An RNA of 207 nucleotides, treated with 2A3 and read out base by base. The 2A3 profile rests on 687 reads. The data come from the RNA Mapping Database (RMDB), library OK3TST.
[RMDB]
RNA sequence: GGGAACGACUCGAGUAGAGUCGAAAAUAGCCAUCGGUGCUGCAAUAGCAUACAACAUGCUUAGUGACAAACCGAUCAAAGUCCCCAACUUUCCAGCAAAGACUGUUGCGGAACUUCCGGUUCAAACACUAACUACCAACAAAACAAUGUUGGCUGGGAUGUACCGCGUAUUCGUACGCGGUACAUCAAAAGAAACAACAACAACAAC
Reactivity to 2A3 in 0.01 (KOAc 150mM, MgCl2 10mM, bicine 150mM(pH8.5), 24C), signal-to-noise 1, nucleotides 027 to 156: u110a080g080c000c010a050u100c130g040g010u080g010c020u020g040c090a140a200u100a210g000c020a000u100a180c070a080a040c040a050u150g000c030u040u060a020g000u000g010a010c040a010a030a010c010c000g020a000u120c070a000a000a000g010u000c010c000c000c000a030a000c000u080u000u000c050c060a040g000c100a150a170a000g030a000c010u000g020u080u060g080c130g000g000a010a010c000u060u060c010c000g020g000u020u080c060a100a090a010c010a000c030u000a020a070c000u010a050c000c000a000a030c000a020a120a020a020c060a060a110u090g000u020u000g010g000c010u050g060g000